[RMDB]
Record summary
The record gives the reactivity of an RNA of 177 nucleotides to 2A3 and DMS.
RNA sequence: GGGAACGACUCGAGUAGAGUCGAAAAGCAUUUUCCAGAUCUGAUUGAGGGGGGUAGCCAGUGAGUGACAUUGAUGGUAGCCACUGAGUUGGGUUAGGUGCAAGAGCCAUGGGGAGGGAAAGGAUUGACCAGUCCUAUAGUUCGCUAUAGGACUGGUAAAAGAAACAACAACAACAAC
Reactivity to 2A3 in 0.01 (KOAc 150mM, MgCl2 10mM, bicine 150mM(pH8.5), 24C), signal-to-noise 2, nucleotides 027 to 126: g050c030a050u130u040u000u010c010c010a040g010a170u050c020u110g020a100u210u100g060a190g070g020g000g000g010g000u020a010g050c000c000a010g000u060g120a200g030u070g000a020c020a010u100u150g060a060u140g140g000u010a000g020c000c000a000c010u050g030a060g100u020u050g120g000g000u010u080a090g020g000u020g000c000a080a070g030a030g110c000c020a080u090g000g000g010g050a170g000g010g000a010a030a040g040g030a010u010u070g030
Reactivity to DMS in 0.01 (KOAc 150mM, MgCl2 10mM, bicine 150mM(pH8.5), 24C), signal-to-noise 3, nucleotides 027 to 126: g030c090a100u020u000u010u000c000c000a140g030a110u000c070u010g020a110u030u000g010a140g000g000g000g010g000g000u010a060g010c060c020a040g000u010g010a110g020u000g000a130c120a110u000u000g000a090u010g030g000u000a230g000c010c010a020c020u000g000a060g000u000u000g000g000g010u010u000a050g020g000u000g010c040a110a120g000a100g000c030c030a060u000g000g010g010g010a170g000g000g010a030a070a050g010g010a100u000u010g010

For 2A3 the reverse transcriptase was SuperScript II with manganese. The 2A3 profile rests on 1,481 reads. DMS adducts were read by reverse transcription with MarathonRT.